[RMDB]
RNA sequence: GGGAACGACUCGAGUAGAGUCGAAAAACUGUUGCUAAAGCAUUGGCAAAAGUGCAAGAUGUUGUCAACAUACAAGGGCAAGCUUUAAGCCACCUAACAGUACAAUUGCAAAAUAAUUUCCAAGCCAUUAGUAGUUCUAUUAGUGACAUUUAUAAUACAGACGAGGUAAAUUCGUUUACCUCGUCUGAAAAGAAACAACAACAACAAC
Reactivity to DMS in 0.01 (KOAc 150mM, MgCl2 10mM, bicine 150mM(pH8.5), 24C), signal-to-noise 1, nucleotides 027 to 156: a110c060u000g010u000u010g040c030u000a110a100a170g080c130a150u000u010g010g050c030a140a050a120a120g080u000g000c080a150a130g030a140u000g020u000u000g000u030c070a090a120c120a080u010a060c110a030a190g000g020g020c040a070a060g070c000u000u000u020a100a070g000c000c030a010c090c010u000a050a080c100a100g020u010a130c030a030a100u010u000g010c020a040a070a050a200u000a060a170u000u010u000c000c020a110a170g050c020c030a000u000u000a010g010u000a070g020u000u000c030u000a010u000u010a040g020u010g010a030c010a070u000u020u030a060u010a080a150u000a240
Reactivity to 2A3 in 0.01 (KOAc 150mM, MgCl2 10mM, bicine 150mM(pH8.5), 24C), signal-to-noise 2, nucleotides 027 to 156: a000c030u040g040u000u010g000c010u000a030a000a060g000c010a080u020u070g040g010c020a090a090a050a080g090u100g050c040a060a010g020a150u050g020u080u020g130u120c020a020a010c010a170u250a110c030a080a080g010g000g000c020a000a110g000c050u090u200u130a020a050g000c010c000a060c000c000u040a080a030c030a040g040u060a010c030a080a140u050u030g000c030a000a000a180a000u080a030a140u200u000u000c100c020a010a000g000c010c010a000u020u000a030g040u010a050g030u020u040c050u140a120u080u030a030g010u000g030a010c000a010u000u120u040a250u080a210a140u130a080
About this RNA:
Chemical mapping of a 207-nucleotide RNA with DMS and 2A3. For 2A3 the reverse transcriptase was SuperScript II with manganese. DMS adducts were read by reverse transcription with MarathonRT.